This 177-nucleotide RNA was probed chemically with DMS and 2A3.
Source: RMDB library OK2TRN, as collected in RNAgym.
The reactions ran in a buffer of 150 mM KOAc, 10 mM MgCl2 and 150 mM bicine (pH 8.5), at 24 C.
For 2A3 the reverse transcriptase was SuperScript II with manganese.
RNA sequence: GGGAACGACUCGAGUAGAGUCGAAAAGGAUCCUAAGUACUCUUGGUAACUGCCACGAGAUCAGUUACCAGUGAGGAGUACUCUAUGUGUCAAUGAUCUCGUGGUUGACGUAUAGAGAUUAGGAUCGCUACUGGUAAGUAUUCGUACUUACCAGUAGAAAAGAAACAACAACAACAAC
Reactivity to DMS in 0.01 (KOAc 150mM, MgCl2 10mM, bicine 150mM(pH8.5), 24C), signal-to-noise 9, nucleotides 027 to 126: g000g000a010u000c000c000u000a010a030g010u010a120c000u000c000u000u000g010g020u000a100a120c050u000g000c040c020a040c040g000a040g000a040u000c000a020g010u000u000a010c010c000a040g000u010g000a010g000g000a230g010u010a180c000u000c000u000a120u000g010u010g010u000c100a060a060u000g000a040u000c020u000c040g020u000g000g010u000u000g010a050c070g010u000a060u000a010g000a010g010a140u000u000a010g010g000a010u000c000g000
Reactivity to 2A3 in 0.01 (KOAc 150mM, MgCl2 10mM, bicine 150mM(pH8.5), 24C), signal-to-noise 9, nucleotides 027 to 126: g020g000a000u000c000c000u010a020a010g060u060a140c000u010c010u040u050g070g020u120a120a090c020u020g000c010c010a030c030g030a020g000a040u020c000a010g070u020u030a000c000c000a010g010u020g010a010g020g020a030g060u110a050c000u000c000u020a160u050g150u030g000u010c040a010a020u020g010a030u010c010u000c020g010u010g000g000u000u020g020a010c010g050u080a040u030a040g000a000g000a010u010u010a000g000g000a000u000c000g000